[RMDB]
RNA sequence: GGGAACGACUCGAGUAGAGUCGAAAAUGGGCUGACAGGAAUCGACAGUAGAGUGUAUCAUGUCAGUAAGCAUGCCGGGGAAUGGUGGUUUACCCCGUUAUCAAAUGAUUACCGACCAAUAAUUGGCUUAGCUCGUUGGGCUUCGGCCCAACGAGAAUCGAUAGUUAUUCUUCGGAAUAACUAUCGAAAAAGAAACAACAACAACAAC
Reactivity to DMS in 0.01 (KOAc 150mM, MgCl2 10mM, bicine 150mM(pH8.5), 24C), signal-to-noise 2, nucleotides 027 to 156: u000g010g020g020c020u000g010a080c020a040g000g000a120a100u000c040g000a050c020a120g030u000a140g000a170g030u000g040u010a190u000c050a090u010g000u020c000a050g040u010a040a130g010c030a050u000g000c090c020g020g020g040g020a060a120u010g020g000u000g030g030u000u000u000a180c010c000c000c010g040u020u000a050u000c300a050a050a090u000g010a090u000u000a050c010c000g020a040c040c030a050a150u000a040a110u010u000g000g020c020u000u000a080g020c000u010c000g010u000u000g000g020g000c000u000u010c300g060g010c000c000c000a000a000c020g010a020g000a000a070
Reactivity to 2A3 in 0.01 (KOAc 150mM, MgCl2 10mM, bicine 150mM(pH8.5), 24C), signal-to-noise 6, nucleotides 027 to 156: u030g010g070g010c010u010g000a000c010a020g050g080a070a080u140c080g060a070c060a060g180u250a050g080a080g080u060g010u040a080u090c040a040u040g000u010c000a010g020u040a050a030g110c030a020u050g060c020c000g000g000g000g010a010a030u050g010g010u000g010g010u010u020u110a050c010c000c000c000g050u040u020a030u020c020a020a000a050u060g020a020u070u060a020c010c020g080a090c030c050a040a080u200a130a100u140u070g040g000c050u090u100a040g050c000u010c000g000u000u000g000g000g000c000u030u030c170g090g000c000c000c010a000a000c000g000a000g000a000a000